[RMDB]
An RNA of 177 nucleotides, treated with DMS and 2A3 and read out base by base. The reactions ran in a buffer of 150 mM KOAc, 10 mM MgCl2 and 150 mM bicine (pH 8.5), at 24 C. Values cover nucleotides 27 to 126. 2A3 adducts were read by reverse transcription with SuperScript II with manganese. DMS adducts were read by reverse transcription with MarathonRT. Values are in units of 0.01, from 0 to 300, in steps of 10.
RNA sequence: GGGAACGACUCGAGUAGAGUCGAAAACAUAGGAGGUACAACAUGUACAAAAUUUUUAGUUUCGUUUCAUUAAUACUUAGUAUGCUAUGUUUUAUGGGCUUACAAGUUUUAAAUGUCAUUCAAAAAAACGUUGCUACUAAUUCGUUAGUAGCAACGUAAAAGAAACAACAACAACAAC
Reactivity to DMS in 0.01 (KOAc 150mM, MgCl2 10mM, bicine 150mM(pH8.5), 24C), signal-to-noise 2, nucleotides 027 to 126: c040a100u020a080g000g000a130g010g010u000a020c010a150a150c170a100u050g060u000a000c010a090a050a080a080u000u040u040u020u020a180g010u000u000u000c090g010u000u000u000c000a040u000u000a040a000u010a010c010u000u020a110g030u000a010u000g020c000u000a050u000g010u040u030u060u010a080u020g030g010g000c030u000u010a000c000a020a020g040u000u000u010u000a000a020a050u010g010u010c100a070u040u010c080a010a000a040a050a100a050
Reactivity to 2A3 in 0.01 (KOAc 150mM, MgCl2 10mM, bicine 150mM(pH8.5), 24C), signal-to-noise 3, nucleotides 027 to 126: c080a020u150a040g150g010a040g010g120u020a010c040a230a010c070a250u240g020u030a030c000a010a110a030a030u120u170u050u060u120a080g020u020u050u010c030g010u060u090u030c010a000u020u020a020a000u010a000c010u010u000a080g000u010a020u040g000c000u020a030u160g090u110u050u040u040a120u210g110g020g010c010u010u000a010c000a020a020g010u000u000u000u100a090a150a040u050g010u010c030a060u090u050c080a090a020a010a010a000a000